[RMDB]
RNA sequence: GGGAACGACUCGAGUAGAGUCGAAAACAACCAAUCCUGACAAUUUGUAUGACUUCUGGAUUUCCAGCCACAUUACAACAAUGUAACAAUAAACAUUUAUUAAUUGCUUAAGCCAAUUUGAGUUAGGUUCCUUAUAUAAUAAAUGAAGUCAAAAAAAGGACUAUUAGCCAUUCGUGGCUAAUAGUCCAAAAGAAACAACAACAACAAC
Reactivity to 2A3 in 0.01 (KOAc 150mM, MgCl2 10mM, bicine 150mM(pH8.5), 24C), signal-to-noise 1, nucleotides 027 to 156: c020a000a020c000c000a000a110u040c030c090u030g040a170c090a300a300u180u240u030g050u060a090u140g060a050c030u090u030c020u080g000g060a040u070u020u100c010c010a040g030c020c000a020c000a060u020u130a030c010a080a000c000a080a050u050g030u110a190a000c030a300a030u040a200a190a000c000a000u100u090u000a060u160u160a220a080u080u030g000c000u130u110a060a000g000c020c010a050a030u000u000u130g110a120g000u000u070a020g050g000u060u040c000c030u160u000a060u030a080u020a270a080u190a020a170a120u060g000a020a000g010u010c120a090a060a030a080a090a000a000
An RNA of 207 nucleotides, treated with 2A3 and read out base by base.
The reactions ran in a buffer of 150 mM KOAc, 10 mM MgCl2 and 150 mM bicine (pH 8.5), at 24 C.
Values are in units of 0.01, from 0 to 300, in steps of 10.